[RMDB]
RNA sequence: GGGAACGACUCGAGUAGAGUCGAAAAGUCUAGGAUUACCAAUCUCAGAUAAACUCCGAAUGCUAAUACACAUGUUCGGCAGUCAGACUGCGAGUGCUAAGAUCCGUAGUCGAAAGGGAAACAGCCCAGACCAACAGCUAAGGUCCCAAAAUAUAUGCCAACUAGUAUGGUUCGCCAUACUAGUUGGAAAAGAAACAACAACAACAAC
Reactivity to DMS in 0.01 (KOAc 150mM, MgCl2 10mM, bicine 150mM(pH8.5), 24C), signal-to-noise 2, nucleotides 027 to 156: g000u010c020u020a070g020g040a070u000u000a100c020c050a190a300u000c040u010c000a160g000a090u000a020a080a050c020u000c010c020g020a090a020u010g030c100u010a090a120u000a170c160a110c060a080u000g030u000u010c000g010g010c020a010g000u000c060a130g000a070c000u000g000c020g000a060g040u000g070c050u000a120a160g020a050u000c030c020g060u000a020g080u010c020g020a050a020a100g020g000g020a110a020a030c060a300g040c000c010c000a060g000a060c020c010a000a170c090a090g030c020u020a080a090g020g030u000c010c010c000a030a030a090a100u000a110u000a140u000g030
Reactivity to 2A3 in 0.01 (KOAc 150mM, MgCl2 10mM, bicine 150mM(pH8.5), 24C), signal-to-noise 4, nucleotides 027 to 156: g020u020c020u060a070g020g060a050u080u090a110c010c010a060a070u040c040u010c040a020g030a190u090a090a100a010c020u010c000c010g020a020a030u080g020c060u170a160a080u240a290c100a020c020a100u130g040u040u020c010g010g000c040a000g000u040c010a010g010a030c000u010g000c010g050a100g060u070g080c110u160a110a070g020a190u000c000c010g020u010a010g000u000c010g020a030a030a030g020g000g010a070a160a020c020a060g040c020c010c000a000g010a040c010c030a030a060c030a040g090c030u120a130a030g040g010u010c000c000c000a020a040a020a000u160a020u060a040u110g070